[RMDB]
RNA sequence: GGGAACGACUCGAGUAGAGUCGAAAAGGCUCACUAGGUGCGCAUCUCUGGAGGCUGCUGGGGGGCCCUUCCUCUUUCUCCCUGGUCGACGGCUUGCUGGGGAAGCCUAGGAUGUCCGACUGCCUGGCUAGGCAAGACUCUUCGGAGUCUUGCCUAGAAAAGAAACAACAACAACAAC
Reactivity to DMS in 0.01 (KOAc 150mM, MgCl2 10mM, bicine 150mM(pH8.5), 24C), signal-to-noise 1, nucleotides 027 to 126: g020g000c000u000c030a190c000u010a050g000g020u020g020c130g020c170a170u000c040u010c020u020g040g040a140g000g030c000u030g010c040u010g030g000g010g050g030g010c050c060c030u030u010c010c040u040c050u000u000u000c030u000c040c020c000u000g000g000u090c230g000a110c100g000g000c000u000u020g000c000u000g000g020g030g050a010a090g010c000c000u040a070g020g000a100u020g020u010c020c020g010a120c110u020g070c000c030u010g000g000
Reactivity to 2A3 in 0.01 (KOAc 150mM, MgCl2 10mM, bicine 150mM(pH8.5), 24C), signal-to-noise 3, nucleotides 027 to 126: g010g000c010u000c030a130c010u010a020g030g010u090g080c150g020c040a210u020c020u000c020u070g100g010a010g010g020c030u070g000c010u020g040g000g000g000g000g000c000c000c020u080u070c010c000u070c010u030u090u020c040u040c010c010c000u000g050g020u060c090g100a110c030g040g000c040u030u090g050c000u060g010g030g010g000a040a010g000c000c010u020a050g060g010a030u060g090u050c000c000g030a050c050u030g020c000c010u020g020g020